[RMDB]
RNA sequence: GGGAACGACUCGAGUAGAGUCGAAAACUACGAUGCUUCGGCAUCGUAGAAAGAAAACUCAAGACGAAUGCGCUGAAAAACGUGUUGAGACAGCGCAAAGAAAAACUUGGUUCUUCGGAACCAAGAACCUAAUUUAUUGGUUCGCCAAUAAAUUAGGAAAAGAAACAACAACAACAAC
Reactivity to DMS in 0.01 (KOAc 150mM, MgCl2 10mM, bicine 150mM(pH8.5), 24C), signal-to-noise 5, nucleotides 027 to 126: c000u000a000c000g010a010u000g000c000u000u010c200g040g010c000a010u000c000g020u000a000g000a030a070a150g000a100a090a100a100c030u000c020a100a110g020a100c110g000a150a110u000g010c010g020c010u000g000a080a050a060a070a080c100g020u010g010u000u000g010a160g000a160c040a010g000c010g010c020a020a060a110g000a050a080a080a050a140c000u000u000g010g000u000u000c000u000u010c170g020g000a000a010c000c000a000a000g000a070a090
Reactivity to 2A3 in 0.01 (KOAc 150mM, MgCl2 10mM, bicine 150mM(pH8.5), 24C), signal-to-noise 6, nucleotides 027 to 126: c000u000a000c010g000a000u010g000c020u050u090c230g130g000c010a000u000c000g000u000a000g000a000a010a000g000a010a070a010a020c050u050c080a060a060g170a070c080g110a160a050u060g010c000g010c010u020g070a170a050a010a050a030c130g100u160g140u270u190g040a050g010a040c000a000g010c010g000c000a000a050a000g010a000a080a010a010a010c010u000u000g010g010u000u010c000u020u040c200g090g000a000a000c000c000a000a000g000a000a000